The record gives the reactivity of an RNA of 177 nucleotides to 2A3 and DMS.
Conditions: 150 mM KOAc, 10 mM MgCl2 and 150 mM bicine (pH 8.5), 24 C.
Values cover nucleotides 27 to 126.
For 2A3, 1,549 sequencing reads were counted.
For DMS the reverse transcriptase was MarathonRT.
RNA sequence: GGGAACGACUCGAGUAGAGUCGAAAAGGUUUCGCCAUGUUGGCCAGGCUGGUCUGGAACUCCUGACCUCAAGUGAUCCACCCGUCUUGGCCUCCCAGAGUGCUGGGAUUAUAGGCAUGAGCCACUGACUUCGGUACACAUUCGUGUGUACCGAAGUAAAAGAAACAACAACAACAAC
Reactivity to 2A3 in 0.01 (KOAc 150mM, MgCl2 10mM, bicine 150mM(pH8.5), 24C), signal-to-noise 2, nucleotides 027 to 126: g070g000u070u090u090c020g000c000c000a070u130g030u090u110g040g050c000c020a010g020g050c000u020g000g000u000c080u070g010g020a060a010c000u100c000c020u100g210a280c010c060u180c110a130a040g050u040g140a040u020c010c010a010c000c030c000g000u000c060u040u070g000g040c000c010u010c000c000c000a030g030a090g120u300g130c000u000g010g050g000a030u200u100a150u150a130g020g060c000a000u090g000a010g030c030c050a060c070u020g060
Reactivity to DMS in 0.01 (KOAc 150mM, MgCl2 10mM, bicine 150mM(pH8.5), 24C), signal-to-noise 2, nucleotides 027 to 126: g030g010u000u000u000c130g000c030c020a030u000g020u010u000g000g020c000c000a020g000g000c030u000g030g000u010c060u010g010g020a060a040c050u010c020c030u000g010a130c200c150u010c040a040a040g000u000g000a050u000c010c010a060c070c000c020g010u000c010u000u000g010g010c010c020u000c010c010c010a000g010a300g010u010g030c010u020g000g000g010a050u010u000a070u010a090g010g010c010a050u000g010a100g000c000c050a080c140u010g000